The record gives the reactivity of an RNA of 177 nucleotides to DMS and 2A3. Values cover nucleotides 27 to 126. For 2A3 the reverse transcriptase was SuperScript II with manganese. Conditions: 150 mM KOAc, 10 mM MgCl2 and 150 mM bicine (pH 8.5), 24 C.

[RMDB]
RNA sequence: GGGAACGACUCGAGUAGAGUCGAAAAAGUUUGAGUGUGGUAGCGCUGUGUGAGUUGGCGGUGGAACCCCCUCGUGGUGACACGAGCCCCCGUGGCCAAAAGCCCAGUGUUUACAGCACCUCUCACACAUCCAUAUUCCUUUCGAGGAAUAUGGAUGAAAAGAAACAACAACAACAAC
Reactivity to DMS in 0.01 (KOAc 150mM, MgCl2 10mM, bicine 150mM(pH8.5), 24C), signal-to-noise 5, nucleotides 027 to 126: a060g000u000u010u010g000a100g030u010g010u020g010g020u010a020g010c030g000c000u010g000u020g010u000g000a130g020u000u000g010g010c000g000g020u000g010g020a060a220c050c010c040c070c010u010c010g020u010g010g010u060g000a250c000a010c000g010a040g010c060c020c010c010c030g010u020g000g000c010c010a010a020a090a300g000c020c020c040a020g020u000g010u020u020u000a020c030a100g020c010a020c040c030u010c000u000c040a050c120a150
Reactivity to 2A3 in 0.01 (KOAc 150mM, MgCl2 10mM, bicine 150mM(pH8.5), 24C), signal-to-noise 8, nucleotides 027 to 126: a000g090u070u070u060g070a080g010u070g000u030g030g030u030a010g010c010g000c010u010g000u000g010u010g040a300g150u020u020g020g000c030g010g010u080g060g020a120a120c000c020c000c000c010u000c010g000u010g000g030u080g020a030c000a000c000g000a010g010c000c000c000c000c000g070u130g200g010c000c010a000a020a010a010g000c000c010c000a000g000u000g020u070u200u060a010c020a020g010c000a010c010c010u000c000u010c000a060c000a000